[RMDB]
Structure probing data (2A3 and DMS) for a 207-nucleotide construct. For 2A3, 1,220 sequencing reads were counted. For 2A3 the reverse transcriptase was SuperScript II with manganese. For DMS the reverse transcriptase was MarathonRT. The reactions ran in a buffer of 150 mM KOAc, 10 mM MgCl2 and 150 mM bicine (pH 8.5), at 24 C. Values cover nucleotides 27 to 156.
RNA sequence: GGGAACGACUCGAGUAGAGUCGAAAACAAAGCCAUCGAGGAGAAGUUGGCGACCGGCGAAACGGUAAUUGAUCUCGACCCUACCCUGAUCGAAGAUUCAUUCGUCAUGGACCGGCUGGCGCAGGCCGACGAGCAGUUUCGCGAACUGGUCGAGGCGACUGAAAACCACAUUCGUGUGGUUUUCAGUAAAAGAAACAACAACAACAAC
Reactivity to 2A3 in 0.01 (KOAc 150mM, MgCl2 10mM, bicine 150mM(pH8.5), 24C), signal-to-noise 2, nucleotides 027 to 156: c060a020a070a010g000c000c020a040u050c060g050a140g080g060a120g040a050a090g050u030u020g040g000c010g000a010c020c010g050g000c030g030a030a030a030c060g020g030u150a110a090u120u130g040a020u000c000u010c030g020a050c000c020c020u090a120c040c030c010u030g000a070u090c060g050a080a050g010a060u190u090c050a020u040u010c000g030u010c010a080u110g080g000a160c040c010g010g000c060u060g110g030c120g030c070a040g000g040c000c040g000a060c010g000a010g000c020a030g000u000u010u110c060g000c020g020a090a030c060u170g000g060u010c010g000a010g000g000c020g010
Reactivity to DMS in 0.01 (KOAc 150mM, MgCl2 10mM, bicine 150mM(pH8.5), 24C), signal-to-noise 2, nucleotides 027 to 156: c020a100a100a130g040c010c010a080u010c030g000a130g010g030a230g010a120a120g010u000u000g030g020c000g010a030c010c010g000g010c000g000a130a080a070c010g000g070u000a070a100u010u000g000a040u000c000u000c000g020a040c010c010c030u000a240c030c010c090u010g000a060u010c000g020a070a060g040a080u000u000c070a120u010u010c000g010u000c060a140u000g100g010a060c010c030g000g060c040u000g040g050c190g020c070a070g020g060c010c020g010a050c020g020a080g000c000a060g020u000u000u000c060g040c050g020a020a020c020u000g000g030u000c020g000a100g020g000c030g020